[RMDB]
RNA sequence: GGGAACGACUCGAGUAGAGUCGAAAAAUCCUGGUAAAAGUAGCAGAAUAGAAUGGUGAAAAUCCAUUCCGCCGAAAGGGCAAAGGUUCCUUGGCAAUGUUCGUCAGCCGAGGGUUAGCCGAUCCUACAUAGGGUAGUUCUUCGGAACUACCCUAUGAAAAGAAACAACAACAACAAC
Reactivity to DMS in 0.01 (KOAc 150mM, MgCl2 10mM, bicine 150mM(pH8.5), 24C), signal-to-noise 2, nucleotides 027 to 126: a070u000c020c020u000g020g010u010a080a070a090a110g020u000a050g040c120a050g000a050a100u000a140g000a040a000u000g030g020u000g000a050a050a220a090u000c000c000a030u000u000c010c170g020c020c030g010a030a080a090g000g010g010c140a040a070a110g000g020u000u010c000c000u000u000g000g010c010a100a070u010g000u010u010c120g010u000c070a170g000c000c000g000a010g030g000g000u020u010a050g000c030c000g000a130u010c030c000u000a210
Source information: Structure probing data (DMS) for a 177-nucleotide construct. High DMS reactivity at an A or C suggests that its Watson-Crick edge is free. The DMS profile rests on 1,259 reads. The data come from the RNA Mapping Database (RMDB), library RFMREP. DMS adducts were read by reverse transcription with MarathonRT.